[RMDB]
RNA sequence: GGGAACGACUCGAGUAGAGUCGAAAAUUUUGGCCUUUGUUCUCUUGUAAUUCAAUGAGAAUAAGAGAAUGUCAGUUGCUUCAGCAGUUAGUGACACUGGUUAGAACUCCCCUAAGAUGAAAGUCUGAAGCCCAGAUGAGCUGUGAGCUGGAUGUCCGUAAUAGCGUACUUUCGAGUACGCUAUUACAAAAGAAACAACAACAACAAC
Reactivity to DMS in 0.01 (KOAc 150mM, MgCl2 10mM, bicine 150mM(pH8.5), 24C), signal-to-noise 2, nucleotides 027 to 156: u000u000u000u010g020g000c020c030u000u000u000g030u000u000c010u000c010u010u000g000u000a090a150u000u000c060a120a090u010g010a070g010a060a050u010a030a060g000a080g060a060a060u000g010u000c060a170g030u000u000g040c020u000u000c030a110g010c070a090g040u000u000a010g040u000g030a060c040a030c030u010g030g020u010u010a080g020a100a110c100u000c000c040c030c040u010a080a090g000a070u000g000a090a090a160g010u000c020u010g000a050a130g000c080c020c030a060g010a120u000g000a110g000c020u010g010u000g000a110g080c010u000g000g000a090u000g000u010c030c080
Reactivity to 2A3 in 0.01 (KOAc 150mM, MgCl2 10mM, bicine 150mM(pH8.5), 24C), signal-to-noise 2, nucleotides 027 to 156: u120u110u040u060g050g000c000c000u120u000u070g000u020u030c020u010c010u010u020g110u230a120a180u240u090c060a020a120u280g030a050g020a110a000u030a050a030g030a020g000a100a020u040g030u020c020a000g020u080u030g030c000u090u110c060a020g050c020a040g080u090u170a060g060u120g050a000c000a000c100u020g030g030u020u020a070g040a070a040c010u030c000c000c010c000u020a010a010g020a060u040g030a120a020a010g020u000c020u010g020a040a000g000c060c030c000a080g030a050u040g000a010g020c000u030g050u020g050a010g000c000u010g030g100a100u170g060u120c080c070